[RMDB]
RNA sequence: GGGAACGACUCGAGUAGAGUCGAAAAGAUAUGGACGUAAUCUUCGCACUGCCACUGCCUCAAUGCGUAAUCGGAAACGAUUACGCAUUGAGGCAUGCAGUGAACUACGAAGAUUACGUCCUAAGUCCUGUAAUCACUAGUUCGCUAGUGAUUACAGAAAAGAAACAACAACAACAAC
Reactivity to DMS in 0.01 (KOAc 150mM, MgCl2 10mM, bicine 150mM(pH8.5), 24C), signal-to-noise 4, nucleotides 027 to 126: g000a110u010a280u000g000g010a010c000g010u000a000a010u000c000u000u000c000g010c000a020c000u000g000c010c050a030c090u010g000c000c000u000c000a020a000u000g000c000g010u010a000a000u000c010g020g010a140a110a270c010g000a020u000u000a000c000g000c000a000u000u000g010a010g000g000c000a000u000g000c010a010g010u000g000a030a050c220u010a300c000g000a000a010g010a010u000u000a000c010g010u000c000c000u000a000a080g000u010c040